Conditions: 150 mM KOAc, 10 mM MgCl2 and 150 mM bicine (pH 8.5), 24 C. An RNA of 177 nucleotides, treated with 2A3 and DMS and read out base by base. The 2A3 profile rests on 808 reads. Source: RMDB library OK1LIB, as collected in RNAgym.
RNA sequence: GGGAACGACUCGAGUAGAGUCGAAAAUUGCUUUUGUAACAGUAGGCGCUCCGAGUGGAAGCGGAGUAUUGCCCCUGGGGCACGCGGCGGAGCCCUGUAACUUAUGGCUACCCAGGCAGCUAUGUGGCUAGAGGCACGUUUUCGAACGUGCCUCUAGAAAAGAAACAACAACAACAAC
Reactivity to 2A3 in 0.01 (KOAc 150mM, MgCl2 10mM, bicine 150mM(pH8.5), 24C), signal-to-noise 2, nucleotides 027 to 126: u080u100g000c000u070u100u130u120g070u060a060a000c010a040g030u030a030g080g020c030g040c060u000c000c000g060a090g080u150g120g190a170a000g060c040g000g040a040g060u230a130u000u280g000c000c000c000c060u090g120g000g040g000c020a000c100g040c000g070g000c000g040g040a020g000c000c000c020u030g010u010a070a020c010u080u070a040u280g060g000c000u010a130c000c000c000a050g000g150c000a050g000c060u150a030u240g110u150g120g000
Reactivity to DMS in 0.01 (KOAc 150mM, MgCl2 10mM, bicine 150mM(pH8.5), 24C), signal-to-noise 2, nucleotides 027 to 126: u020u030g020c030u000u010u000u000g000u020a050a050c040a050g040u080a000g000g020c060g020c000u030c030c000g040a090g030u000g020g030a090a150g000c080g020g010a060g030u000a060u050u070g010c040c000c050c240u000g010g060g020g000c000a060c070g010c040g000g030c010g070g000a150g010c020c000c030u000g030u000a030a090c010u000u000a040u000g000g030c020u000a170c020c010c020a170g000g030c060a000g000c090u000a070u010g000u060g000g000
2A3 adducts were read by reverse transcription with SuperScript II with manganese.